[RMDB]
RNA sequence: GGGAACGACUCGAGUAGAGUCGAAAAGACUACGUAGAAGGCUGUAUCUGACUCCGAGAGCACUAUUCUUCCUGUAGCGCCAACCAGGGAAUAGUUGGCGAGUCAGGAAUACUUGGCACGUAGAGAAGAUAAUGUGUGAUUUCGAUCGUACAUUAUCAAAAGAAACAACAACAACAAC
Reactivity to DMS in 0.01 (KOAc 150mM, MgCl2 10mM, bicine 150mM(pH8.5), 24C), signal-to-noise 9, nucleotides 027 to 126: g010a190c010u000a000c010g010u010a060g000a150a050g010g010c130u010g010u010a050u010c010u000g000a020c000u000c010c040g000a160g020a160g010c130a030c010u000a010u000u000c020u030u040c010c000u000g000u010a130g010c090g010c070c070a080a090c300c010a010g000g000g000a010a000u000a020g010u000u010g010g000c110g000a020g010u000c000a000g000g010a060a030u010a030c020u010u000g000g010c170a030c010g000u000a010g010a160g010a100a100
Reactivity to 2A3 in 0.01 (KOAc 150mM, MgCl2 10mM, bicine 150mM(pH8.5), 24C), signal-to-noise 9, nucleotides 027 to 126: g020a020c000u000a000c000g020u030a030g040a220a020g150g010c030u020g000u020a030u000c000u000g000a000c000u000c010c020g050a040g010a020g090c030a000c000u000a000u010u000c010u110u070c000c000u010g020u040a030g050c040g050c090c020a030a050c040c000a010g010g000g010a000a000u010a000g010u020u080g050g030c080g000a000g000u000c000a000g000g000a030a010u020a010c010u030u050g030g000c010a000c000g000u000a000g010a010g020a100a010
An RNA of 177 nucleotides, treated with DMS and 2A3 and read out base by base. High DMS reactivity at an A or C suggests that its Watson-Crick edge is free. For DMS, 86,347 sequencing reads were counted. The reactions ran in a buffer of 150 mM KOAc, 10 mM MgCl2 and 150 mM bicine (pH 8.5), at 24 C. For DMS the reverse transcriptase was MarathonRT. 2A3 is a SHAPE reagent: it acylates the 2'-hydroxyl of flexible nucleotides of all four kinds. Source: RMDB library OK1LIB, as collected in RNAgym.